An RNA of 177 nucleotides, treated with 2A3 and DMS and read out base by base.
It was measured as part of the RMDB library OK2TST.
The 2A3 profile rests on 1,399 reads.
RNA sequence: GGGAACGACUCGAGUAGAGUCGAAAAGGGCAGGGGAGAAACUGACUCCUUUUUCCAUCUCUUUUUUGCCUGCACACUUAAUGUGGACUGCCUCCUUGGACUUAAAAAGAGUUGAGCCAACAUGCAACUGACAAACGUAGUUCGCUACGUUUGUCAGAAAAGAAACAACAACAACAAC
Reactivity to 2A3 in 0.01 (KOAc 150mM, MgCl2 10mM, bicine 150mM(pH8.5), 24C), signal-to-noise 2, nucleotides 027 to 126: g020g000g010c020a050g060g020g040g000a060g040a010a190a040c070u060g170a140c010u140c030c050u020u030u030u020u010c020c000a080u030c060u000c000u030u030u000u000u070u070g090c070c060u100g020c110a110c010a010c080u120u150a070a020u200g040u070g100g000a070c000u020g010c010c040u090c010c030u000u000g070g000a050c000u080u120a100a030a000a010a130g010a000g000u030u000g000a010g050c020c000a040a060c050a070u190g030c000a060a050
Reactivity to DMS in 0.01 (KOAc 150mM, MgCl2 10mM, bicine 150mM(pH8.5), 24C), signal-to-noise 3, nucleotides 027 to 126: g010g000g020c060a030g000g010g000g020a060g000a080a090a080c190u020g010a120c030u000c010c010u000u030u010u040u010c000c000a050u000c070u000c010u000u000u000u000u010u000g000c050c030u010g010c120a140c040a060c070u000u000a140a060u000g000u010g010g000a130c070u000g000c000c050u000c050c100u010u000g010g030a040c010u000u000a010a070a070a160a100g000a050g000u010u010g000a110g000c030c030a050a050c170a070u000g020c180a110a150